[RMDB]
RNA sequence: GGGAACGACUCGAGUAGAGUCGAAAAAUCAGGUGCUGGCCAUGCCGGAGGGCACUCGGUUUCUGGUGCUGGCCCCGGUGGUGCGUACCCGCAAGGGCGAGUUCGCCGAUCUGUUCGAUAAGCUCAAGUCGUUAGACAACUUCGGUUGUCUAACGACAAAAGAAACAACAACAACAAC
Reactivity to DMS in 0.01 (KOAc 150mM, MgCl2 10mM, bicine 150mM(pH8.5), 24C), signal-to-noise 1, nucleotides 027 to 126: a040u000c030a050g000g010u000g020c050u010g010g020c000c040a150u010g030c060c040g020g010a040g000g000g020c030a040c040u000c230g020g000u000u010u010c020u000g010g010u000g000c060u010g010g010c110c020c070c070g040g010u010g000g030u000g030c020g000u000a050c040c000c020g010c290a120a190g000g000g030c060g010a130g010u000u000c050g030c010c000g000a030u000c050u000g000u010u000c030g000a040u020a100a160g000c010u010c020a110a060
Reactivity to 2A3 in 0.01 (KOAc 150mM, MgCl2 10mM, bicine 150mM(pH8.5), 24C), signal-to-noise 1, nucleotides 027 to 126: a030u070c040a020g070g000u070g010c040u110g030g110c040c000a020u060g040c000c030g030g030a030g020g090g020c060a000c050u070c060g070g000u080u050u040c030u050g000g000u010g000c050u000g130g050c000c050c010c010g050g030u040g070g040u040g060c030g000u020a090c020c030c000g030c020a040a110g030g000g040c020g040a020g200u240u120c000g000c000c010g010a040u000c050u130g090u090u020c040g000a010u020a160a030g000c000u040c100a040a020